[RMDB]
RNA sequence: GGGAACGACUCGAGUAGAGUCGAAAAUGGAGAUAGACCUCUUGUGUGGUCUCCUCCGCGUACCCCGGGUCGUGGAGGACCCGCAGGAUCAGGCCGAAGACGCGCGCAGACGUCCGGUCGUACAGUAAGGGUGAAAAUGAUUCGUCAUUUUCACCCUAAAAGAAACAACAACAACAAC
Reactivity to 2A3 in 0.01 (KOAc 150mM, MgCl2 10mM, bicine 150mM(pH8.5), 24C), signal-to-noise 1, nucleotides 027 to 126: u110g050g010a090g020a090u090a110g100a090c030c000u000c000u110u040g060u040g060u130g070g010u030c090u050c040c010u010c000c000g000c000g000u060a020c000c020c060c000g240g030g000u030c010g000u070g070g020a020g020g000a000c010c000c010g000c010a020g020g010a050u100c050a070g020g000c000c000g010a150a070g000a010c000g020c010g000c020g000c080a030g070a120c000g010u040c000c000g020g000u020c030g020u100a070c040a100g070u120a090
Reactivity to DMS in 0.01 (KOAc 150mM, MgCl2 10mM, bicine 150mM(pH8.5), 24C), signal-to-noise 2, nucleotides 027 to 126: u000g010g010a070g020a120u000a080g000a120c060c040u000c030u010u000g020u000g010u010g030g000u010c140u000c120c010u000c000c000g020c060g010u010a060c020c010c110c140g000g010g020u000c000g050u000g020g010a090g010g000a030c020c000c010g010c060a030g000g000a060u000c100a100g010g020c000c000g000a130a130g000a040c030g000c040g000c210g020c160a110g020a190c020g010u000c020c020g010g010u000c030g000u010a020c180a130g000u000a100
Source: RMDB library OK2TST, as collected in RNAgym. An RNA of 177 nucleotides, treated with 2A3 and DMS and read out base by base. Reactivities are given for positions 27 through 126. The DMS profile rests on 1,941 reads. For 2A3 the reverse transcriptase was SuperScript II with manganese. For DMS the reverse transcriptase was MarathonRT. The RNA was probed in 150 mM KOAc, 10 mM MgCl2 and 150 mM bicine (pH 8.5) at 24 C.